[RMDB]
RNA sequence: GGGAACGACUCGAGUAGAGUCGAAAAAGAUCGCGGCCGCGGAAUGAAGCUUGCAGCGACCUCCUUUCCGUUGACCUCAGCGUGUCGGCACAACAAGGAGAUUUCGUGCUGAUGUGGUCGUCACAUGCGCACCAGUACGAUUCGUCGUACUGGUGCGAAAAGAAACAACAACAACAAC
Reactivity to DMS in 0.01 (KOAc 150mM, MgCl2 10mM, bicine 150mM(pH8.5), 24C), signal-to-noise 2, nucleotides 027 to 126: a080g000a100u010c160g010c000g000g000c010c300g020c030g000g020a080a080u040g040a000a080g000c060u000u010g000c080a030g010c050g000a010c300c000u000c040c030u050u040u030c050c070g000u050u000g000a080c060c080u000c150a090g000c260g010u050g000u000c010g010g010c000a150c010a060a220c300a030a040g000g020a070g000a080u000u000u010c240g000u000g020c010u000g000a030u030g000u020g000g070u000c070g000u080c060a050c110a050u020g020
Reactivity to 2A3 in 0.01 (KOAc 150mM, MgCl2 10mM, bicine 150mM(pH8.5), 24C), signal-to-noise 5, nucleotides 027 to 126: a030g100a080u150c060g000c010g020g000c020c030g010c010g050g060a100a100u210g090a090a040g050c080u060u090g020c080a030g040c010g060a030c010c000u030c010c010u030u030u020c050c070g000u010u090g040a060c010c030u180c080a070g090c070g150u150g050u080c000g020g000c070a010c010a210a120c080a030a050g100g020a070g030a070u120u210u140c060g030u040g000c030u070g020a060u090g010u030g040g000u010c010g040u070c030a010c040a170u210g030